Structure probing data (DMS and 2A3) for a 177-nucleotide construct. For 2A3, 2,183 sequencing reads were counted. For 2A3 the reverse transcriptase was SuperScript II with manganese. Source: RMDB library OK2TST, as collected in RNAgym. Conditions: 150 mM KOAc, 10 mM MgCl2 and 150 mM bicine (pH 8.5), 24 C.
[RMDB]
RNA sequence: GGGAACGACUCGAGUAGAGUCGAAAAAGGGCGGGCCAUCGCGGCAAAGCCGGGGAUGAACGGUCACUGGUAGUUGAGGACGCCCAGGACACUGCGGACCUGCCGCGCGGAGGUCAGUUCGCGCGGCCAACUCCUUCCGAUUCGUCGGAAGGAGUUGAAAAGAAACAACAACAACAAC
Reactivity to DMS in 0.01 (KOAc 150mM, MgCl2 10mM, bicine 150mM(pH8.5), 24C), signal-to-noise 3, nucleotides 027 to 126: a090g000g010g010c040g000g000g010c060c020a100u000c040g020c050g020g040c090a110a120a170g020c020c020g020g000g000g000a070u000g010a120a120c210g010g010u020c020a060c030u000g010g020u010a080g010u010u000g020a100g000g000a170c040g020c030c010c060a060g000g010a080c100a060c050u000g010c040g000g020a150c050c040u010g000c010c000g010c000g040c010g010g000a050g020g010u010c230a090g000u000u000c000g010c000g040c010g000g040c040
Reactivity to 2A3 in 0.01 (KOAc 150mM, MgCl2 10mM, bicine 150mM(pH8.5), 24C), signal-to-noise 2, nucleotides 027 to 126: a000g000g000g000c030g050g100g000c040c000a190u080c040g020c030g050g040c070a080a050a000g020c000c020g020g000g020g000a110u140g060a120a100c080g060g020u030c030a020c110u030g020g110u120a100g050u050u180g080a030g010g040a010c020g000c000c000c010a000g020g000a020c030a000c110u120g010c020g030g000a030c000c000u020g030c000c000g000c010g000c010g000g000a030g050g170u170c050a050g050u040u020c000g010c010g000c000g000g000c010